[RMDB]
RNA sequence: GGGAACGACUCGAGUAGAGUCGAAAACUUUGGUGAAGCCCUAUCUAGUAUAGCAAUCCACCAAGCAGGUGAUUUCACACAAUUCAGGUUUUCAUAGAAAAUGCGCCCUGACUUGACAGGUAUGGUCACGAGUCGAUGAUUUCGAUCAUCGACUCGUAAAAGAAACAACAACAACAAC
Reactivity to 2A3 in 0.01 (KOAc 150mM, MgCl2 10mM, bicine 150mM(pH8.5), 24C), signal-to-noise 1, nucleotides 027 to 126: c000u000u020u170g020g000u000g000a130a050g030c080c030c000u000a050u070c040u070a030g050u040a090u020a020g000c000a000a000u010c000c000a000c010c000a020a000g060c060a030g060g130u090g040a140u000u080u070c020a030c000a000c040a020a000u030u030c060a060g010g130u050u030u090u020c010a010u040a160g170a100a110a070a010u060g020c000g020c020c020c000u010g040a020c000u060u030g130a000c040a070g090g000u000a050u070g000g000u060c000
Reactivity to DMS in 0.01 (KOAc 150mM, MgCl2 10mM, bicine 150mM(pH8.5), 24C), signal-to-noise 1, nucleotides 027 to 126: c000u040u010u000g020g000u040g000a120a000g010c200c260c000u000a050u000c030u050a120g000u030a060u000a010g000c070a080a160u030c060c000a130c070c020a040a090g000c250a090g000g000u000g010a050u000u030u010c010a060c150a160c010a140a160u000u000c000a040g020g010u000u000u000u020c050a090u000a040g000a150a050a080a000u000g000c140g000c150c000c010u000g000a000c060u000u000g000a000c130a150g000g130u000a000u030g000g000u000c110